[RMDB]
RNA sequence: GGGAACGACUCGAGUAGAGUCGAAAAGAUAUGGAUCCACAUGGGAGCGUUAUCGGAAACGAUGCGCAUCGAUCAUGGGAUCCUAAGUCAAAAGUGAUACCCGUUGCUUCGGCAACGGGUAUCACAAGACAGAGAAUGAGUUCGCUCAUUCUCUGUCAAAAGAAACAACAACAACAAC
Reactivity to DMS in 0.01 (KOAc 150mM, MgCl2 10mM, bicine 150mM(pH8.5), 24C), signal-to-noise 2, nucleotides 027 to 126: g000a040u010a300u000g010g010a000u000c000c010a080c020a000u000g000g000g010a040g030c020g020u000u010a010u000c000g000g000a060a110a190c020g020a000u000g000c020g000c000a200u000c070g000a080u010c010a000u000g000g010g000a000u000c010c000u000a010a060g010u010c020a100a080a050a110g010u000g000a030u000a000c000c000c000g020u000u000g010c010u000u010c220g040g000c000a000a000c000g000g040g000u000a000u000c010a000c000a020a070
Reactivity to 2A3 in 0.01 (KOAc 150mM, MgCl2 10mM, bicine 150mM(pH8.5), 24C), signal-to-noise 1, nucleotides 027 to 126: g030a010u090a020u130g000g000a000u000c000c000a090c000a300u020g000g000g000a010g000c010g040u230u300a020u010c000g000g000a010a080a010c020g000a000u000g060c020g060c000a170u080c010g080a080u080c000a010u020g000g040g000a000u000c000c000u010a040a010g030u000c030a080a010a040a170g010u030g000a010u000a000c000c030c050g000u030u000g020c030u070u150c300g100g000c000a000a040c050g080g000g000u000a010u000c010a010c000a000a000
The record gives the reactivity of an RNA of 177 nucleotides to DMS and 2A3.
The RNA was probed in 150 mM KOAc, 10 mM MgCl2 and 150 mM bicine (pH 8.5) at 24 C.
For 2A3 the reverse transcriptase was SuperScript II with manganese.
Reactivities are rounded to 0.1 and cut off at 0 and 3.